[RMDB]
RNA sequence: GGGAACGACUCGAGUAGAGUCGAAAACCAUAACAGUUCGCUGUUAUGGACUGUCGGAAUGCGGAAAAAUUAAUCGUCCGCUUACGAUUAAUACCGACUAUAAAGCGUAACACUUCGGUGUUACGAACAGUUCUUCUGAUUUCGAUCAGAAGAACUGAAAAGAAACAACAACAACAAC
Reactivity to DMS in 0.01 (KOAc 150mM, MgCl2 10mM, bicine 150mM(pH8.5), 24C), signal-to-noise 4, nucleotides 027 to 126: c010c000a010u000a010a000c000a000g020u010u000c220g030c000u000g000u000u000a000u000g000g000a100c170u010g010u000c010g000g000a120a050u000g010c030g010g000a020a030a090a110a120u010u000a050a060u000c210g000u000c050c070g010c060u000u000a060c060g010a040u000u010a050a050u000a150c000c000g000a070c100u000a120u000a070a080a110g000c000g010u000a000a000c000a010c000u010u030c200g020g010u000g000u000u000a000c000g020a040a090
Reactivity to 2A3 in 0.01 (KOAc 150mM, MgCl2 10mM, bicine 150mM(pH8.5), 24C), signal-to-noise 5, nucleotides 027 to 126: c000c000a000u000a000a000c000a000g020u060u080c140g040c130u000g010u000u010a010u000g000g020a050c060u070g010u010c010g020g040a120a080u090g030c030g030g130a030a080a060a000a110u240u230a100a130u140c110g020u000c010c000g010c000u000u070a020c010g020a010u000u080a030a010u060a080c020c010g030a010c030u050a080u100a300a140a000g100c010g000u000a000a000c010a000c000u020u080c180g070g000u000g000u010u000a000c000g000a050a010
Source: RMDB library M2PK50, as collected in RNAgym.
This 177-nucleotide RNA was probed chemically with DMS and 2A3.
The 2A3 profile rests on 7,085 reads.
For DMS, 4,427 sequencing reads were counted.
For DMS the reverse transcriptase was MarathonRT.